About this RNA: An RNA of 207 nucleotides, treated with DMS and 2A3 and read out base by base. Source: RMDB library OK3TST, as collected in RNAgym. DMS adducts were read by reverse transcription with MarathonRT. The RNA was probed in 150 mM KOAc, 10 mM MgCl2 and 150 mM bicine (pH 8.5) at 24 C. For 2A3 the reverse transcriptase was SuperScript II with manganese.
RNA sequence: GGGAACGACUCGAGUAGAGUCGAAAAUCAGGAUUAGGUUUUACAUUAACUAAAGAUAAUGUACUACAAGUUAACCCAGGUUAUGUGUACAUAAAUGGUAAGAUACGUUACUAUAAUAGUGAAGACACUGUUAAAAUUACGGGUGUAGGUAAAGAAAUCGUCAAACUAUUUUCGAAUAGUUUGACGAAAAAGAAACAACAACAACAAC
Reactivity to DMS in 0.01 (KOAc 150mM, MgCl2 10mM, bicine 150mM(pH8.5), 24C), signal-to-noise 3, nucleotides 027 to 156: u010c040a130g030g040a120u000u010a100g000g020u000u010u010u000a040c030a040u000u000a060a280c060u010a130a100a220g010a300u000a010a030u000g000u010a020c100u010a050c040a070a120g020u010u010a050a070c030c010c010a140g060g000u000u000a030u030g000u000g020u000a070c020a090u010a050a040a090u020g020g000u000a030a080g000a110u000a040c050g000u000u000a030c030u000a180u000a030a040u000a030g030u000g000a040a280g010a220c030a050c010u000g020u000u000a030a070a050a050u000u000a030c050g030g000g010u000g020u000a050g030g010u000a050a060a120g000a040a100a150
Reactivity to 2A3 in 0.01 (KOAc 150mM, MgCl2 10mM, bicine 150mM(pH8.5), 24C), signal-to-noise 3, nucleotides 027 to 156: u060c010a020g080g020a060u050u160a030g090g000u040u050u000u030a070c030a020u060u020a070a090c030u090a210a070a100g100a120u080a060a000u030g010u010a020c010u010a010c020a080a070g010u020u060a050a030c010c010c000a020g070g000u030u050a030u070g050u010g010u010a010c010a010u060a040a140a010u070g020g010u050a050a020g020a080u080a080c080g020u040u010a000c030u010a020u090a200a090u030a060g040u020g060a070a030g030a030c020a010c040u000g020u040u010a050a120a110a120u070u070a030c040g000g020g000u010g000u020a070g000g030u070a040a050a010g050a020a100a020